Annotation: This 177-nucleotide RNA was probed chemically with 2A3 and DMS.
RNA sequence: GGGAACGACUCGAGUAGAGUCGAAAAGGUGGGCAGCAGGACGGCGUAGUUGGUUGAGAUGAUCCUGGCGAGCGUGUUCACCACCUCGGCCGGCGUCGGUGCGGCGGCCACCGCGGCCACCAGAUCGCAUGUUGAUGGCGUUCGCGCCAUCAACAUGAAAAGAAACAACAACAACAAC
Reactivity to 2A3 in 0.01 (KOAc 150mM, MgCl2 10mM, bicine 150mM(pH8.5), 24C), signal-to-noise 2, nucleotides 027 to 126: g000g000u000g010g030g000c050a010g000c020a000g100g050a010c080g030g130c050g050u100a040g150u070u120g000g010u130u220g050a140g000a160u270g010a090u110c000c030u050g020g060c000g000a030g060c240g000u050g010u120u220c110a040c130c000a020c070c000u030c020g170g120c010c000g000g020c000g000u000c020g010g060u090g040c000g070g020c000g020g010c030c000a020c020c000g000c040g050g100c000c000a000c030c000a020g030a130u080c030g000
Reactivity to DMS in 0.01 (KOAc 150mM, MgCl2 10mM, bicine 150mM(pH8.5), 24C), signal-to-noise 1, nucleotides 027 to 126: g030g020u000g000g070g000c030a040g000c010a030g000g140a050c030g020g000c000g000u000a020g010u050u000g000g000u020u020g000a030g020a080u020g010a150u020c120c000u010g000g000c020g000a030g010c240g000u000g000u070u100c200a120c250c020a040c030c010u000c060g000g010c000c000g000g000c070g000u000c020g000g010u000g030c070g000g000c000g040g000c030c000a040c070c090g000c050g000g000c040c010a060c000c000a020g010a170u000c030g000

For DMS, 1,591 sequencing reads were counted. For DMS the reverse transcriptase was MarathonRT.